Background:
An RNA of 207 nucleotides, treated with 2A3 and read out base by base. It was measured as part of the RMDB library M2RFPK. Values cover nucleotides 27 to 156. The reactions ran in a buffer of 150 mM KOAc, 10 mM MgCl2 and 150 mM bicine (pH 8.5), at 24 C. The 2A3 profile rests on 785 reads. Values are in units of 0.01, from 0 to 300, in steps of 10. 2A3 adducts were read by reverse transcription with SuperScript II with manganese.
RNA sequence: GGGAACGACUCGAGUAGAGUCGAAAAGCAAAGAGUCAAAAAAAUAGAGAGCUUUGCGAGACCUACCAAGGGUGAAGAGAUACCAUCCAAGGAGCUGAAGAGAAAUCUCACUUUAGACGCAUGGGGAAAAAGACCCUUUCGUUCGCGAAAGGGUCAAGCUGUGCAAAUAGUUCGCUAUUUGCACAGCAAAAGAAACAACAACAACAAC
Reactivity to 2A3 in 0.01 (KOAc 150mM, MgCl2 10mM, bicine 150mM(pH8.5), 24C), signal-to-noise 2, nucleotides 027 to 156: g000c000a010a040a010g010a000g080u040c060a060a110a160a140a180a070a080u300a040g100a030g000a030g020c010u010u000u020g000c010g000a070g020a030c010c000u010a050c000c030a080a100g060g010g010u080g050a050a030g060a030g040a120u060a090c030c000a000u000c010c000a040a000g020g000a010g020c040u070g030a080a010g020a060g030a130a120a100u020c030u040c020a050c060u050u140u100a050g000a120c030g050c050a040u080g000g000g000g030a000a040a090a020a010g040a000c000c010c040u000u000u010c010g010u010u020c270g000c000g090a000a010a000g000g010g000u000c000a000a000